[RMDB]
An RNA of 207 nucleotides, treated with DMS and 2A3 and read out base by base. Conditions: 150 mM KOAc, 10 mM MgCl2 and 150 mM bicine (pH 8.5), 24 C. Reactivities are given for positions 27 through 156. DMS adducts were read by reverse transcription with MarathonRT.
RNA sequence: GGGAACGACUCGAGUAGAGUCGAAAACGAAGGAAAGCUUGACCUGCUAAUCUUCUGCAACGCCAUUACGAGGACUGCCCUUAGAGGCUCAUGGCGAUAGGUCACCCCGCCGGUCGGUCAGCUGCUUAUACCCGUGCACGGUUCGCCGUGCACGGAAUCUUUUAGUUGAGUUCGCUCAACUAAAAGAAAAAGAAACAACAACAACAAC
Reactivity to DMS in 0.01 (KOAc 150mM, MgCl2 10mM, bicine 150mM(pH8.5), 24C), signal-to-noise 2, nucleotides 027 to 156: c040g020a210a060g000g020a100a220a070g020c010u000u020g040a070c020c010u000g070c050u000a090a140u000c060u000u010c030u010g010c050a080a180c030g000c020c030a090u000u010a050c080g010a140g000g000a070c060u010g010c000c010c010u000u050a100g000a130g010g010c000u000c050a050u000g010g020c010g010a130u000a020g010g000u000c050a140c020c000c000c060g020c020c020g010g010u000c090g010g010u000c030a130g000c000u000g010c010u010u010a120u000a130c180c000c000g040u000g010c000a030c000g000g000u000u010c300g080c000c040g010u000g020c000a000c000g000g000a010a000
Reactivity to 2A3 in 0.01 (KOAc 150mM, MgCl2 10mM, bicine 150mM(pH8.5), 24C), signal-to-noise 3, nucleotides 027 to 156: c040g020a030a010g050g050a290a060a010g010c020u090u110g010a030c010c010u020g000c010u030a100a070u070c040u120u030c050u110g020c020a080a080c030g010c030c000a020u090u120a050c100g020a080g060g060a090c080u090g020c000c000c000u080u140a120g040a170g140g010c020u020c010a000u020g000g000c010g030a080u110a050g040g000u050c020a070c010c000c000c010g040c010c000g030g070u100c020g010g020u000c010a030g020c070u080g000c020u120u120a080u070a160c010c000c020g000u000g000c000a000c000g000g080u050u070c160g010c040c000g000u000g010c000a000c000g000g000a000a000